An RNA of 207 nucleotides, treated with 2A3 and DMS and read out base by base. The RNA was probed in 150 mM KOAc, 10 mM MgCl2 and 150 mM bicine (pH 8.5) at 24 C. It was measured as part of the RMDB library M2RFPK.

RNA sequence: GGGAACGACUCGAGUAGAGUCGAAAAUCGCGUUGGCUGCCUAAUUCAAGGAAUUAGCGUGCCUUCAUGCUAAGGGUUUGAUAUCUGCUAAAACCCGGUGCAUUCAUCAUUGCAGGUUAAGCCAAAGAAACGGCUCACGAAUUCGUUCGUGAGCCAAGUUCAUUUCAUUGUUCGCAAUGAAAUGAACAAAAGAAACAACAACAACAAC
Reactivity to 2A3 in 0.01 (KOAc 150mM, MgCl2 10mM, bicine 150mM(pH8.5), 24C), signal-to-noise 5, nucleotides 027 to 156: u110c010g000c020g070u020u010g020g000c020u050g050c040c020u030a020a010u030u030c150a250a140g190g050a100a030u020u000a020g020c050g060u050g000c010c010u010u010c040a040u040g000c010u030a040a030g010g000g000u000u000u000g020a020u050a040u070c020u020g020c020u030a020a020a010a010c000c000c000g010g010u040g000c010a070u080u220c030a070u060c030a100u080u150g000c010a010g040g010u090u210a170a040g020c050c050a110a100a020g110a020a110a040c150g000g000c000u010c000a000c000g020a030a010u090u070c120g040u090u010c000g010u070g150a010g000c000c000a000a000
Reactivity to DMS in 0.01 (KOAc 150mM, MgCl2 10mM, bicine 150mM(pH8.5), 24C), signal-to-noise 3, nucleotides 027 to 156: u000c060g000c040g000u000u010g010g010c040u020g020c120c030u000a020a060u000u000c030a160a220g020g010a060a080u000u010a050g010c010g010u010g000c040c020u000u000c070a100u000g030c030u000a300a170g010g000g000u000u000u000g000a220u000a050u000c050u010g030c070u000a100a020a020a050c020c000c000g030g080u010g020c010a030u000u020c070a080u010c090a210u010u000g000c020a010g000g010u000u000a030a050g000c030c040a040a090a140g020a070a090a110c170g030g020c000u000c000a020c000g010a020a070u000u010c280g010u000u000c010g030u020g000a020g020c000c010a000a020